[RMDB]
RNA sequence: GGGAACGACUCGAGUAGAGUCGAAAACAAGCGGGCUGGCCCGAGGGUAUCCGGUUUCCGGGAGACCCGACGGCGAGAUUGAAAACGGAAACUAUCCUGGUAGAAGCUACUGUGGAUGUACCUUCGGACGGGGGUUCGACUCCCCCCGCCUCCACCACGUGUCUUACUAGUUCGCUAGUAAGACACGAAAAGAAACAACAACAACAAC
Reactivity to 2A3 in 0.01 (KOAc 150mM, MgCl2 10mM, bicine 150mM(pH8.5), 24C), signal-to-noise 1, nucleotides 027 to 156: c020a050a040g090c060g040g040g050c040u030g020g000c010c000c000g010a020g000g020g010u000a010u010c010c000g040g030u020u100u010c020c000g000g000g000a060g020a030c010c000c000g030a010c010g000g000c010g010a010g000a050u160u240g030a050a000a000a020c020g020g020a050a030a000c020u050a030u030c000c000u050g000g030u010a020g020a300a040g180c080u030a000c000u050g080u140g170g000a000u000g000u070a090c000c070u120u090c040g000g050a030c010g010g010g000g000g000u030u120c020g050a030c030u040c040c010c000c000c010c000g000c000c050u040c010c010a090c020c030a090
The data come from the RNA Mapping Database (RMDB), library RSTRND.
This 207-nucleotide RNA was probed chemically with 2A3.
The 2A3 profile rests on 934 reads.
The RNA was probed in 150 mM KOAc, 10 mM MgCl2 and 150 mM bicine (pH 8.5) at 24 C.
Reactivities are rounded to 0.1 and cut off at 0 and 3.